[RMDB]
RNA sequence: GGGAACGACUCGAGUAGAGUCGAAAAAAGUCAGGCGAUUUCGGUCCGCAAGCGACCGCUGACAUUGCCAGCGUGGCUACCGCGACCGCGACCGCCAAGGGUCUCACAGAAUCUUGCGGACAGCGUCCAUCGUUGUCGAGUUCGCUCGACAACGAUGAAAAGAAACAACAACAACAAC
Reactivity to 2A3 in 0.01 (KOAc 150mM, MgCl2 10mM, bicine 150mM(pH8.5), 24C), signal-to-noise 1, nucleotides 027 to 126: a050a000g080u070c040a040g000g000c000g000a010u020u090u080c010g050g000u040c030c050g000c030a030a000g000c050g100a090c060c030g000c040u030g000a040c040a180u020u300g060c000c010a020g020c000g100u060g070g000c010u070a060c060c110g000c040g000a020c010c070g000c000g030a050c020c030g040c050c000a030a030g060g010g010u020c020u040c080a140c010a020g130a090a050u120c010u070u100g010c060g000g030a000c010a030g050c060g050u020c050
Reactivity to DMS in 0.01 (KOAc 150mM, MgCl2 10mM, bicine 150mM(pH8.5), 24C), signal-to-noise 2, nucleotides 027 to 126: a030a080g020u010c100a210g010g010c030g000a090u010u000u010c010g000g000u000c010c020g030c070a080a030g010c040g000a080c210c020g020c010u070g010a030c020a100u000u010g010c020c010a010g010c040g000u010g000g000c010u000a040c260c160g000c060g000a080c050c060g000c040g000a050c040c020g010c010c010a050a090g030g000g020u000c020u010c110a160c190a080g000a070a110u000c030u000u000g000c040g000g010a090c040a150g010c110g010u030c040
The data come from the RNA Mapping Database (RMDB), library OK2TRN. An RNA of 177 nucleotides, treated with 2A3 and DMS and read out base by base. For 2A3 the reverse transcriptase was SuperScript II with manganese. The 2A3 profile rests on 1,254 reads. For DMS, 1,496 sequencing reads were counted. The reactions ran in a buffer of 150 mM KOAc, 10 mM MgCl2 and 150 mM bicine (pH 8.5), at 24 C.